[RMDB]
RNA sequence: GGGAACGACUCGAGUAGAGUCGAAAACGACCAUGGCACGAAUUUCGCCACUAUGACGAUCCACCGCGAUCGCAGCGGCUUCGAGAUCUUUGCCUGCAGUUUUCGCUAAUUGCGGGAUCUGAUCGUAGCUCACCGUACUAUUCGUAGUACGGUGAGCAAAAGAAACAACAACAACAAC
Reactivity to DMS in 0.01 (KOAc 150mM, MgCl2 10mM, bicine 150mM(pH8.5), 24C), signal-to-noise 2, nucleotides 027 to 126: c070g000a150c170c050a060u000g000g000c020a080c110g030a050a070u000u020u010c050g000c000c000a040c060u000a080u000g020a140c030g010a020u010c030c030a180c300c270g010c080g010a020u000c030g040c040a040g000c020g020g010c140u010u020c090g000a070g000a020u000c010u010u000u010g020c000c000u000g000c000a020g010u000u000u000u000c120g020c070u010a060a120u000u010g000c020g000g000g010a020u000c020u000g000a090u000c040g010u000a080
Reactivity to 2A3 in 0.01 (KOAc 150mM, MgCl2 10mM, bicine 150mM(pH8.5), 24C), signal-to-noise 2, nucleotides 027 to 126: c040g020a030c010c030a110u100g020g000c040a010c070g080a150a080u060u070u100c050g020c040c010a020c040u170a210u180g080a140c010g000a010u000c000c030a220c180c150g080c170g000a020u060c020g000c020a010g020c000g030g010c000u090u110c090g070a100g030a020u020c000u020u040u210g040c010c000u030g000c000a020g000u000u000u010u100c060g000c070u080a120a140u190u100g000c000g030g000g020a030u000c030u010g030a040u060c020g080u050a050